Overview
The data come from the RNA Mapping Database (RMDB), library OK1LIB. Chemical mapping of a 177-nucleotide RNA with 2A3 and DMS. For 2A3 the reverse transcriptase was SuperScript II with manganese. The reactions ran in a buffer of 150 mM KOAc, 10 mM MgCl2 and 150 mM bicine (pH 8.5), at 24 C. Values cover nucleotides 27 to 126.
RNA sequence: GGGAACGACUCGAGUAGAGUCGAAAAGAAACGCUAACUGCUUUGGUAACAGUGGUGCAAACAUUGACUACUUCAGCAGUAGUGGUGGAAGCAAUGAGUGCACAAACAAAAGGGUUAACACUGGUACGACUUUUAAAUCAUUCGUGAUUUAAAAGUCAAAAGAAACAACAACAACAAC
Reactivity to 2A3 in 0.01 (KOAc 150mM, MgCl2 10mM, bicine 150mM(pH8.5), 24C), signal-to-noise 9, nucleotides 027 to 126: g040a010a080a000c060g000c060u060a130a120c010u050g020c010u070u090u110g050g010u040a080a020c000a020g010u030g040g040u140g080c040a030a070a020c000a010u010u030g060a070c010u010a010c000u030u040c030a030g000c000a010g010u040a010g010u030g050g030u040g040g100a070a020g040c030a020a060u090g020a040g080u040g010c030a010c000a060a110a010c040a030a110a100a030g150g020g010u060u070a060a020c040a010c060u050g040g040u100a040c080
Reactivity to DMS in 0.01 (KOAc 150mM, MgCl2 10mM, bicine 150mM(pH8.5), 24C), signal-to-noise 6, nucleotides 027 to 126: g010a140a070a100c100g000c090u010a050a050c010u000g000c010u010u020u000g010g000u000a020a070c020a020g000u000g010g000u010g000c200a070a060a100c010a000u000u000g000a100c040u000a010c010u000u000c120a060g020c040a030g010u000a020g020u000g010g010u010g010g010a100a070g010c040a040a030u010g010a090g030u000g000c020a020c060a070a040a070c100a030a080a110a120g010g000g030u020u020a110a190c050a010c020u000g010g010u010a060c130